Conditions: 150 mM KOAc, 10 mM MgCl2 and 150 mM bicine (pH 8.5), 24 C. Structure probing data (DMS and 2A3) for a 177-nucleotide construct. The 2A3 profile rests on 1,545 reads. Reactivities are given for positions 27 through 126.

RNA sequence: GGGAACGACUCGAGUAGAGUCGAAAAGCGGACUUUUUCGAAAGUCCGCAUGGACUCAGAAGUGAAACCCCGUAGCGCCGAUGGUAGUGUGGGGUCUCCCCAGAUACCAACCCUUCGGGGUUGGUAAGUAAGUUGCCAUAUUCGUAUGGCAACUUACAAAAGAAACAACAACAACAAC
Reactivity to DMS in 0.01 (KOAc 150mM, MgCl2 10mM, bicine 150mM(pH8.5), 24C), signal-to-noise 2, nucleotides 027 to 126: g020c030g010g010a000c000u000u010u010u020u000c150g020a020a040a020g010u000c000c000g040c010a000u010g010g000a170c030u000c030a100g000a170a060g010u000g000a090a100a030c010c000c010c010g000u000a160g000c060g020c010c020g020a160u000g040g010u000a070g070u000g010u000g010g010g040g040u000c020u020c000c010c020c050a180g000a190u000a020c000c000a030a010c010c010c000u000u000c210g020g000g010g010u000u000g010g010u000a000a060
Reactivity to 2A3 in 0.01 (KOAc 150mM, MgCl2 10mM, bicine 150mM(pH8.5), 24C), signal-to-noise 2, nucleotides 027 to 126: g000c000g000g000a010c000u010u020u010u030u100c210g090a040a000a020g000u000c000c030g020c000a020u000g030g020a010c030u020c040a070g020a210a030g190u070g090a100a070a030c030c000c020c000g050u060a070g150c020g000c040c030g270a190u260g090g080u070a180g030u040g090u150g030g000g000g000u020c010u010c020c030c000c000a020g040a130u100a020c000c000a010a010c000c000c000u030u040c290g010g010g000g000u010u000g000g000u010a000a000